Conditions: 150 mM KOAc, 10 mM MgCl2 and 150 mM bicine (pH 8.5), 24 C. The record gives the reactivity of an RNA of 177 nucleotides to DMS. Reactivities are rounded to 0.1 and cut off at 0 and 3. The DMS profile rests on 982 reads. Reactivities are given for positions 27 through 126.
RNA sequence: GGGAACGACUCGAGUAGAGUCGAAAAAAAAAGAUAUGGAGCCACUACCCACCCUCGAAACAGCUAUGAAGGGUUUCGGAAACGAAACCUGGAGCUGCACUCGAGGAGGUGGCUCCUAAGUCAAAAAGCCUAUAUUACUGUUCGCAGUAAUAUAGGCAAAAGAAACAACAACAACAAC
Reactivity to DMS in 0.01 (KOAc 150mM, MgCl2 10mM, bicine 150mM(pH8.5), 24C), signal-to-noise 1, nucleotides 027 to 126: a030a090a050a140a140g000a070u000a130u000g000g010a020g000c000c000a020c010u000a140c010c020c020a300c040c000c000u000c020g000a000a110a230c000a000g020c030u010a240u020g010a150a260g000g000g000u000u000u000c010g000g000a110a120a080c000g000a000a000a000c000c010u010g000g000a000g010c000u000g000c080a090c240u000c000g010a010g000g000a070g030g040u000g000g000c000u000c000c000u000a010a100g030u030c090a020a100a150a190a160